Conditions: 150 mM KOAc, 10 mM MgCl2 and 150 mM bicine (pH 8.5), 24 C.
Chemical mapping of a 177-nucleotide RNA with DMS and 2A3.
It was measured as part of the RMDB library OK1LIB.
RNA sequence: GGGAACGACUCGAGUAGAGUCGAAAAGAUGGCGCGGCCGUCGACAAUUGUGAUCGUCACCGACAUUCCACGAACGCAGUCCGGCAAGGUCAUGCGGGCCUCGCUUGCAGCGGCGGCAACAGCAGACGUAUUCAAAGCUGUUCGCAGCUUUGAAUACAAAAGAAACAACAACAACAAC
Reactivity to DMS in 0.01 (KOAc 150mM, MgCl2 10mM, bicine 150mM(pH8.5), 24C), signal-to-noise 4, nucleotides 027 to 126: g020a050u020g010g020c050g020c140g000g010c030c010g030u010c010g020a140c130a050a070u030u040g030u010g010a070u000c060g030u000c030a090c070c030g000a100c090a080u000u000c030c030a060c120g000a110a120c060g000c050a030g020u000c050c040g010g010c040a060a080g000g000u010c000a070u020g010c120g000g010g020c020c000u000c050g000c000u000u010g010c120a080g030c040g000g010c040g030g000c030a080a050c060a060g020c050a060g020a150c160
Reactivity to 2A3 in 0.01 (KOAc 150mM, MgCl2 10mM, bicine 150mM(pH8.5), 24C), signal-to-noise 9, nucleotides 027 to 126: g100a030u150g030g020c060g020c040g120g010c010c010g020u050c010g010a030c030a100a140u160u140g100u080g050a100u060c020g040u030c040a030c080c030g060a050c040a070u090u060c040c020a100c080g050a090a010c040g030c050a010g030u020c030c020g050g000c050a070a060g040g010u040c040a120u110g050c040g020g020g000c010c010u030c040g010c010u030u110g020c060a020g020c010g030g000c000g000g010c020a070a030c020a090g050c010a010g010a080c080